[RMDB]
RNA sequence: GGGAACGACUCGAGUAGAGUCGAAAACGGGGCUUUCGAUCGAAUUGCCCUUGUGGUGCACGCCACGCGUAUGCACCCCCGGGGGAUACCCGUCGAGGCGGCGCACGGCGGUGCGCUCGGUGUGGGAAAGAUCGCAAAUGUUCGCAUUUGCGAUCUUAAAAGAAACAACAACAACAAC
Reactivity to DMS in 0.01 (KOAc 150mM, MgCl2 10mM, bicine 150mM(pH8.5), 24C), signal-to-noise 2, nucleotides 027 to 126: c110g010g010g020g000c020u000u000u000c000g000a160u040c180g000a050a060u000u000g020c000c010c000u000u000g010u010g010g010u000g000c000a030c030g010c000c070a140c210g020c070g010u000a080u010g020c010a030c020c000c010c030c030g020g000g020g010g060a260u000a100c030c020c020g010u000c040g010a140g000g000c080g010g010c010g020c010a110c030g010g010c190g000g000u010g000c020g020c020u000c020g000g020u010g020u010g010g000g000a130
Reactivity to 2A3 in 0.01 (KOAc 150mM, MgCl2 10mM, bicine 150mM(pH8.5), 24C), signal-to-noise 1, nucleotides 027 to 126: c050g010g000g070g000c020u050u040u050c080g240a300u100c130g020a110a120u090u070g030c000c000c000u000u080g010u020g000g000u010g000c020a010c040g020c130c020a210c110g000c040g030u080a120u150g000c010a020c000c010c000c020c010g000g000g000g000g110a040u070a150c010c040c000g000u020c050g000a030g110g240c090g070g000c020g040c050a150c000g180g130c110g110g290u010g000c100g090c010u000c010g000g040u130g040u240g020g000g020a070